RNA sequence: GGGAACGACUCGAGUAGAGUCGAAAAAAGUGGGAGGAUCAGCCACCGGCGAGGGACGCGAUGGUAAGAGUGGAGGAAAGUUCGGAAGGGAAUCCCAAGAGGAUCACUCGAGAUACAAGAGGUGAGGCUUACUCUUCUUCUUCGGAAGAAGAGUAAGAAAAGAAACAACAACAACAAC
Reactivity to 2A3 in 0.01 (KOAc 150mM, MgCl2 10mM, bicine 150mM(pH8.5), 24C), signal-to-noise 2, nucleotides 027 to 126: a010a020g060u100g000g040g020a060g030g010a070u060c030a030g040c020c000a070c030c020g070g000c030g020a060g070g000g030a020c030g030c030g100a060u090g000g050u020a090a030g020a010g060u080g000g040a030g030g060a070a040a010g030u090u040c040g030g030a040a000g080g020g010a070a060u000c030c000c000a020a050g080a050g050g030a020u030c010a040c030u040c010g040a040g010a010u110a100c040a060a070g020a020g030g020u070g020a040g050g000
Reactivity to DMS in 0.01 (KOAc 150mM, MgCl2 10mM, bicine 150mM(pH8.5), 24C), signal-to-noise 3, nucleotides 027 to 126: a050a080g010u000g000g000g020a100g020g010a100u000c080a200g020c050c020a070c080c060g020g000c040g010a120g000g000g000a070c070g010c100g000a050u000g020g000u000a060a070g010a100g030u000g000g000a060g020g000a060a040a080g000u010u000c080g000g000a070a060g000g010g000a120a060u000c020c010c010a100a120g000a160g010g020a070u000c070a060c040u010c010g010a110g000a100u010a050c120a060a080g010a060g020g000u000g000a090g000g010
Chemical mapping of a 177-nucleotide RNA with 2A3 and DMS. The RNA was probed in 150 mM KOAc, 10 mM MgCl2 and 150 mM bicine (pH 8.5) at 24 C. The DMS profile rests on 1,980 reads. It was measured as part of the RMDB library VIROID.